[RMDB]
RNA sequence: GGGAACGACUCGAGUAGAGUCGAAAAUGAUGCAAGUGUGACAGGCACAAAUGCCACAUUGCUUAACCUAGUACCAUUGUUCUACAUCUUGGUAAUCAUAAUAGUGCCUGCGGUAGUAGUAUACAAACGAUCCCGUGGUAUUCGUACCACGGGAUCGAAAAGAAACAACAACAACAAC
Reactivity to DMS in 0.01 (KOAc 150mM, MgCl2 10mM, bicine 150mM(pH8.5), 24C), signal-to-noise 2, nucleotides 027 to 126: u000g010a050u010g000c010a050a020g030u010g030u010g000a060c080a020g020g000c060a080c100a080a070a100u000g010c030c020a010c010a040u000u000g020c000u000u020a120a190c050c020u000a110g000u000a070c020c050a120u000u010g010u010u000c070u000a080c090a140u000c060u010u000g020g000u000a050a050u020c100a090u000a020a080u000a130g000u010g000c020c010u000g010c060g010g020u000a090g030u000a020g020u000a060u000a030c120a040a060a160
Reactivity to 2A3 in 0.01 (KOAc 150mM, MgCl2 10mM, bicine 150mM(pH8.5), 24C), signal-to-noise 2, nucleotides 027 to 126: u120g010a020u060g000c010a060a010g130u030g020u040g120a050c020a000g040g000c100a010c060a080a180a090u100g000c020c010a020c030a080u000u060g010c020u130u090a010a030c000c020u010a040g030u080a030c000c030a060u030u070g050u040u120c030u070a050c000a080u040c030u050u050g000g000u040a030a100u090c070a020u070a300a020u070a160g030u000g030c000c010u010g050c030g020g000u050a030g030u000a010g030u030a120u030a120c100a000a160a000
An RNA of 177 nucleotides, treated with DMS and 2A3 and read out base by base. The reactions ran in a buffer of 150 mM KOAc, 10 mM MgCl2 and 150 mM bicine (pH 8.5), at 24 C. For 2A3 the reverse transcriptase was SuperScript II with manganese. High 2A3 reactivity points to a flexible backbone, as in loops and unpaired stretches. In probing experiments dimethyl sulfate is read out at A N1 and C N3, which are open when not base-paired.